[RMDB]
RNA sequence: GGGAACGACUCGAGUAGAGUCGAAAAUGAUCGAGAGAUCUAAGUAUGUACGCGAGUCAAGUGCACAGACUCGAGCGAAAGCUCGGUCGAAAGACCGCGUACAUGAGCCGGCAAGUGUACAGUCGAACCAUUUUAUAUAUUUCGAUAUAUAAAAUGGAAAAGAAACAACAACAACAAC
Reactivity to 2A3 in 0.01 (KOAc 150mM, MgCl2 10mM, bicine 150mM(pH8.5), 24C), signal-to-noise 4, nucleotides 027 to 126: u100g000a010u010c010g010a010g000a000g000a090u000c010u020a090a020g130u110a090u040g010u000a000c000g000c010g020a010g010u000c010a160a140g030u020g070c030a010c010a040g000a000c010u010c070g000a000g010c000g040a150a010a010g000c000u000c000g000g010u000c000g000a040a010a010g000a000c000c000g000c000g000u010a000c000a000u000g010a010g110c080c020g010g000c030a180a130g010u010g000u040a020c020a020g020u020c020g020a040a050
Reactivity to DMS in 0.01 (KOAc 150mM, MgCl2 10mM, bicine 150mM(pH8.5), 24C), signal-to-noise 9, nucleotides 027 to 126: u010g010a010u000c000g010a280g000a240g000a000u000c010u000a080a140g010u010a020u000g000u000a010c000g020c000g000a050g000u000c000a050a070g020u000g010c030a020c050a300g000a010c000u000c000g020a010g010c000g000a150a100a180g010c000u000c000g010g000u000c000g000a100a080a140g000a010c000c000g010c010g000u000a000c000a000u000g010a110g020c210c020g000g000c020a030a070g010u000g000u000a010c030a300g000u000c020g000a140a260